[RMDB]
RNA sequence: GGGAACGACUCGAGUAGAGUCGAAAAGGCUCAAAAAAAAGUAACUGCGAAUAACAUCGUCAGCUUCAAACGGGUAGCCAUAGCAGCCUAGUCUGUAAAAGCUACAUUUUCUUGUCAAAGACCGUUUACUUCUUUUCUGACUCCGUUAAGGAUUAGAGACAGCGAAGAAGUUCGCUUCUUCGCUGUCAAAAGAAACAACAACAACAAC
Reactivity to 2A3 in 0.01 (KOAc 150mM, MgCl2 10mM, bicine 150mM(pH8.5), 24C), signal-to-noise 1, nucleotides 027 to 156: g100g020c040u010c050a080a050a020a020a000a000a000a020g070u080a130a030c020u040g000c000g000a030a030u100a100a010c010a160u060c010g100u050c030a020g040c110u270u100c040a010a040a000c000g020g010g020u010a010g030c010c000a040u090a040g000c010a000g000c000c110u160a090g030u250c000u010g030u050a000a080a090a030g000c000u000a010c030a130u090u100u010u020c050u020u060g140u110c070a090a120a000g000a070c000c000g030u050u090u000a170c010u030u120c010u080u030u010u000c030u120g000a030c050u000c000c000g020u040u200a070a000g040g010a040u010u050a000g000a010

This 207-nucleotide RNA was probed chemically with 2A3.
Source: RMDB library RSTRND, as collected in RNAgym.
For 2A3 the reverse transcriptase was SuperScript II with manganese.
Conditions: 150 mM KOAc, 10 mM MgCl2 and 150 mM bicine (pH 8.5), 24 C.